[RMDB]
RNA sequence: GGGAACGACUCGAGUAGAGUCGAAAAUCCUAAGUCAACAGGGAGUCUCGUGGGAGGGAGCUAUGUCGGAAACGACAUAGCAUCGAUCUCCCAUCGAGACGAAGAACUGUUGAUAUGGAAAAACAUGAUCGUCGGUGUUCGCACCGACGAUCAUGAACGAUUCUUAAACGUUCGCGUUUAAGAAUCGAAAAGAAACAACAACAACAAC
Reactivity to DMS in 0.01 (KOAc 150mM, MgCl2 10mM, bicine 150mM(pH8.5), 24C), signal-to-noise 1, nucleotides 027 to 156: u000c010c000u000a040a280g010u000c000a030a030c000a030g010g000g020a300g020u000c000u020c010g140u000g000g030g050a080g000g010g030a060g050c030u000a000u010g020u000c020g000g010a130a150a300c030g000a030c010a000u010a010g030c000a030u000c160g000a140u000c000u000c010c000c000a010u000c010g030a020g020a010c000g020a040a170g010a120a210c020u000g030u000u000g020a030u000a160u000g000g000a040a130a050a220a120c010a030u000g010a030u000c010g020u030c000g060g060u000g030u000u010c300g020c000a050c000c010g010a000c000g000a000u000c000a010u000g010a070a140
Reactivity to 2A3 in 0.01 (KOAc 150mM, MgCl2 10mM, bicine 150mM(pH8.5), 24C), signal-to-noise 1, nucleotides 027 to 156: u040c000c000u040a090a020g020u000c000a010a000c010a010g000g010g020a050g000u010c010u000c010g020u010g010g000g000a000g020g000g010a010g000c010u000a000u010g000u000c010g010g060a130a040a030c000g000a010c010a020u010a010g000c020a070u130c020g020a020u020c000u000c020c000c010a010u020c040g000a030g000a000c000g000a000a000g000a000a000c010u000g000u000u010g000a000u020a060u060g020g030a090a090a000a000a020c000a000u040g000a000u030c000g010u020c000g000g010u010g020u080u120c260g000c120a010c030c000g010a000c000g000a000u000c010a000u010g000a000a010
An RNA of 207 nucleotides, treated with DMS and 2A3 and read out base by base. It was measured as part of the RMDB library RNAMAK. For 2A3 the reverse transcriptase was SuperScript II with manganese. Reactivities are given for positions 27 through 156. The RNA was probed in 150 mM KOAc, 10 mM MgCl2 and 150 mM bicine (pH 8.5) at 24 C.